[RMDB]
RNA sequence: GGGAACGACUCGAGUAGAGUCGAAAAGAUAUGGACGUGGAUACCUCGUAAUAGCUUUUGACGGAGGGGUAUCGGAAACGAUACCGACUCCGAUAAGCUAUUACGAGGUAUUUCACGUCCUAAGUCAUCCCUCUUAAAGGUUCGCCUUUAAGAGGGAAAAAGAAACAACAACAACAAC
Reactivity to DMS in 0.01 (KOAc 150mM, MgCl2 10mM, bicine 150mM(pH8.5), 24C), signal-to-noise 3, nucleotides 027 to 126: g010a060u010a300u010g000g000a010c000g060u000g010g000a010u010a010c000c000u000c000g000u000a000a010u010a000g010c000u000u000u000u010g020a270c150g010g000a020g020g020g000g010u000a000u000c000g000g000a130a100a220c010g000a020u000a010c000c010g000a130c000u000c000c000g000a050u000a000a020g000c000u000a010u000u000a000c000g000a000g000g000u000a000u000u010u020c000a000c020g000u010c010c000u000a010a070g000u000c030a190